An RNA of 177 nucleotides, treated with DMS and 2A3 and read out base by base. High 2A3 reactivity points to a flexible backbone, as in loops and unpaired stretches. Source: RMDB library VIROID, as collected in RNAgym. Reactivities are given for positions 27 through 126. For 2A3, 1,425 sequencing reads were counted. The reactions ran in a buffer of 150 mM KOAc, 10 mM MgCl2 and 150 mM bicine (pH 8.5), at 24 C. 2A3 adducts were read by reverse transcription with SuperScript II with manganese.

[RMDB]
RNA sequence: GGGAACGACUCGAGUAGAGUCGAAAAUCAACGGCUCAUCAGUGGGCUUAGCCCAGACUUAUGAGAGUAAUGGUCACCUCUCAGCCCCUCCACCUUGGAGUGCCCUUUCGGAGCACUGCAGUUCCCGCAACCGAUUACUGUUCGCAGUAAUCGGUUGAAAAGAAACAACAACAACAAC
Reactivity to DMS in 0.01 (KOAc 150mM, MgCl2 10mM, bicine 150mM(pH8.5), 24C), signal-to-noise 2, nucleotides 027 to 126: u000c090a100a140c120g000g010c020u000c010a050u010c140a120g020u000g010g000g000c030u000u000a100g000c000c000c000a140g000a060c100u000u010a050u000g010a030g000a040g000u000a040a060u000g010g000u000c080a140c140c010u000c020u010c030a080g000c040c010c010c000u000c030c000a110c190c130u000u000g020g000a030g020u000g000c010c010c010u000u000u020c170g000g000a080g010c010a000c010u000g010c010a090g020u000u000c010c020c020g000
Reactivity to 2A3 in 0.01 (KOAc 150mM, MgCl2 10mM, bicine 150mM(pH8.5), 24C), signal-to-noise 2, nucleotides 027 to 126: u060c010a070a060c060g080g010c010u000c000a070u010c020a030g120u080g010g000g000c000u130u130a020g000c000c000c000a010g000a070c040u130u050a050u130g000a000g000a000g040u110a080a160u190g100g060u070c040a040c050c020u000c000u020c040a100g020c040c000c020c010u030c000c000a060c040c010u030u050g050g050a000g020u010g000c000c000c000u060u160u150c200g020g020a120g050c000a000c000u040g020c000a010g020u000u010c010c000c030g000